[RMDB]
RNA sequence: GGGAACGACUCGAGUAGAGUCGAAAAGUAAUGUUGUAAAACAGUGUUGCACUGCUGCUGUUGAUUUAAGUAUGGAUAAGUUGCGCCGUGUGGAUUGGAAAUCAACCCUACGGUUGUUACUUAUGUUAGGACUAUGGCUUCGGCCAUAGUAAAAGAAACAACAACAACAAC
Reactivity to DMS in 0.01 (KOAc 150mM, MgCl2 10mM, bicine 150mM(pH8.5), 24C), signal-to-noise 4, nucleotides 027 to 129: g030u040a080a060u020g000u040u010g000u050a000a040a050a060c050a000g000u010g000u000u000g030c100a100c050u030g030c030u000g020c070u020g010u000u000g000a160u010u020u060a040a090g040u040a110u040g010g020a050u000a000a000g040u000u010g000c000g030c050c000g060u020g030u000g010g010a100u000u000g000g000a100a130a180u060c020a050a020c060c000c010u020a040c010g010g040u020u050g060u010u020a000c000u040u030a000u020g030u040u030a090g020g030
Reactivity to 2A3 in 0.01 (KOAc 150mM, MgCl2 10mM, bicine 150mM(pH8.5), 24C), signal-to-noise 4, nucleotides 027 to 129: g020u080a050a040u130g000u000u040g000u140a130a030a000a000c000a090g030u080g120u190u180g070c080a140c190u120g000c020u010g000c000u010g050u030u000g070a300u000u030u260a180a010g040u030a120u140g110g040a000u000a000a000g050u030u000g000c050g000c030c030g030u110g040u080g060g040a150u010u030g010g000a060a300a060u160c010a000a040c000c010c010u000a010c000g020g000u100u090g000u000u020a000c000u000u000a000u000g120u050u060a110g000g000
Source: RMDB library 15KLIB, as collected in RNAgym.
Chemical mapping of a 170-nucleotide RNA with DMS and 2A3.
Reactivities are rounded to 0.1 and cut off at 0 and 3.
For DMS the reverse transcriptase was MarathonRT.